[RMDB]
RNA sequence: GGGAACGACUCGAGUAGAGUCGAAAAGUUGUAAGGUUCGCCUUACAACAAAAUAAAACAGGCUACUACCGGCCUGAAAAAGGUACGAAGAUCGAAAGAUCAAAAGACACUUGUUCGCAAGUGUCAACUUGACAUUAUUGUUCGCAAUAAUGUCAAGAAAAGAAACAACAACAACAAC
Reactivity to 2A3 in 0.01 (KOAc 150mM, MgCl2 10mM, bicine 150mM(pH8.5), 24C), signal-to-noise 5, nucleotides 027 to 126: g000u000u000g000u000a010a000g030g020u020u090c200g120c030c000u000u010a000c000a000a000c000a000a050a000a000u090a000a080a010a030c100a020g020g010c000u030a030c010u020a010c180c030g010g010c000c000u010g020a030a000a010a000a000g020g000u040a040c120g050a150a040g010a010u020c010g040a070a040a020g010a000u010c030a020a060a030a070g000a000c000a000c000u010u010g030u080u090c270g000c090a010a000g000u000g000u000c000a000a020
Reactivity to DMS in 0.01 (KOAc 150mM, MgCl2 10mM, bicine 150mM(pH8.5), 24C), signal-to-noise 5, nucleotides 027 to 126: g010u000u000g010u000a000a000g000g020u000u010c280g030c000c000u010u000a010c000a000a010c000a020a040a060a050u000a090a070a100a120c160a020g010g000c010u000a130c120u000a040c050c020g010g000c000c000u010g000a010a030a030a120a080g010g010u000a020c270g020a190a130g010a000u000c000g000a140a070a130g000a010u000c010a070a040a080a110g000a020c000a000c000u000u000g000u000u000c190g020c000a000a010g010u000g000u000c000a040a080